Chemical mapping of a 177-nucleotide RNA with 2A3 and DMS. Conditions: 150 mM KOAc, 10 mM MgCl2 and 150 mM bicine (pH 8.5), 24 C. 2A3 adducts were read by reverse transcription with SuperScript II with manganese. Source: RMDB library OK2TRN, as collected in RNAgym. The DMS profile rests on 1,802 reads. DMS adducts were read by reverse transcription with MarathonRT.
RNA sequence: GGGAACGACUCGAGUAGAGUCGAAAAUUUAUUGCCCAGGCGGGCGGUGCGAUUUUUGAUAACCUCGCAUUAAUCUUCGCCAUCGGUGUGGCAUCCAGCUGGUCGAAAGACAGCGCUGGUGCGGCGGAUGGUAAGACCUGUUCGCAGGUCUUACCAUAAAAGAAACAACAACAACAAC
Reactivity to 2A3 in 0.01 (KOAc 150mM, MgCl2 10mM, bicine 150mM(pH8.5), 24C), signal-to-noise 1, nucleotides 027 to 126: u060u040u050a070u080u150g040c020c000c000a060g060g030c060g000g040g000c060g000g010u070g000c010g020a020u000u100u040u130u160g070a090u130a110a070c050c020u090c040g000c020a000u020u070a060a080u060c150u300u100c010g000c010c000a110u110c080g180g000u160g130u080g180g040c020a040u100c020c020a030g000c000u180g010g020u050c040g060a180a040a030g020a030c020a080g080c030g000c090u000g000g070u010g010c020g070g000c010g030g060
Reactivity to DMS in 0.01 (KOAc 150mM, MgCl2 10mM, bicine 150mM(pH8.5), 24C), signal-to-noise 2, nucleotides 027 to 126: u020u010u000a070u020u010g010c000c010c000a160g000g010c140g030g000g040c240g020g010u000g020c050g010a040u000u010u010u020u020g000a090u010a070a120c150c070u000c020g020c040a040u000u010a130a130u000c050u000u010c060g020c010c010a060u020c070g000g020u000g040u010g000g040c020a080u020c010c030a030g010c010u000g010g000u000c010g000a080a070a210g000a020c000a080g040c210g000c010u010g010g020u000g010c030g010g000c040g000g000